[RMDB]
RNA sequence: GGGAACGACUCGAGUAGAGUCGAAAAAGCGCUCGUUCCAUUCCUAGAACCUUUUUAAACAGAACCAUAGGUAAACGUGGGAUACCCACGGGCUACGAGUACCUUGGCGCCGAUUUUUUAACCGGUAGAUUUACUGAUAGUUCGCUAUCAGUAAAUCAAAAGAAACAACAACAACAAC
Reactivity to DMS in 0.01 (KOAc 150mM, MgCl2 10mM, bicine 150mM(pH8.5), 24C), signal-to-noise 5, nucleotides 027 to 126: a050g010c130g000c050u000c020g020u000u000c030c030a170u000u010c000c020u000a090g010a130a150c080c030u010u000u010u020u020a050a110a150c210a090g000a080a090c060c040a070u010a020g000g010u000a020a170a080c020g010u000g010g000g020a230u000a110c060c010c010a040c060g010g010g000c070u000a030c030g000a080g010u000a020c030c010u010u000g000g010c120g010c010c010g010a010u000u010u000u010u010u010a050a060c020c010g010g030u010a140
Reactivity to 2A3 in 0.01 (KOAc 150mM, MgCl2 10mM, bicine 150mM(pH8.5), 24C), signal-to-noise 3, nucleotides 027 to 126: a000g110c090g000c030u010c020g020u030u000c020c010a030u050u030c010c010u030a040g030a090a070c010c000u050u100u060u100u300a120a160a060c060a050g060a050a040c040c020a080u060a060g030g000u040a100a060a010c010g010u000g000g020g090a160u220a260c000c010c000a000c000g010g000g000c020u020a010c010g010a020g030u040a050c020c000u040u050g070g000c070g000c010c000g020a040u000u030u010u010u050u270a050a050c030c000g020g000u030a060

The record gives the reactivity of an RNA of 177 nucleotides to DMS and 2A3. The RNA was probed in 150 mM KOAc, 10 mM MgCl2 and 150 mM bicine (pH 8.5) at 24 C. Reactivities are given for positions 27 through 126. The DMS profile rests on 5,595 reads. For 2A3 the reverse transcriptase was SuperScript II with manganese.